[RMDB]
RNA sequence: GGGAACGACUCGAGUAGAGUCGAAAAGGGCUAGGCCCGCGUCAUCUGGUAAUAGACCCCGCGCCGGGCCAACAGCUCGGCGUGGUUGCCGCGUUCGACGAUCUGGCCGGUCUGGACCACCAGGAUGACCACCCCUUAGGUUCGCCUAAGGGGUGGUAAAAGAAACAACAACAACAAC
Reactivity to DMS in 0.01 (KOAc 150mM, MgCl2 10mM, bicine 150mM(pH8.5), 24C), signal-to-noise 1, nucleotides 027 to 126: g010g000g010c010u010a100g020g010c010c000c230g010c170g020u000c000a120u010c050u020g090g010u010a060a100u000a080g020a120c120c130c000c010g010c010g010c010c000g010g000g000c000c050a100a150c210a240g000c000u000c000g010g010c000g030u020g000g030u000u050g000c010c020g010c160g030u020u010c080g000a040c030g000a180u020c090u010g000g000c000c090g030g000u000c020u000g010g010a120c030c080a020c060c030a060g010g000a060u010g010

This 177-nucleotide RNA was probed chemically with DMS. In probing experiments dimethyl sulfate is read out at A N1 and C N3, which are open when not base-paired. For DMS the reverse transcriptase was MarathonRT.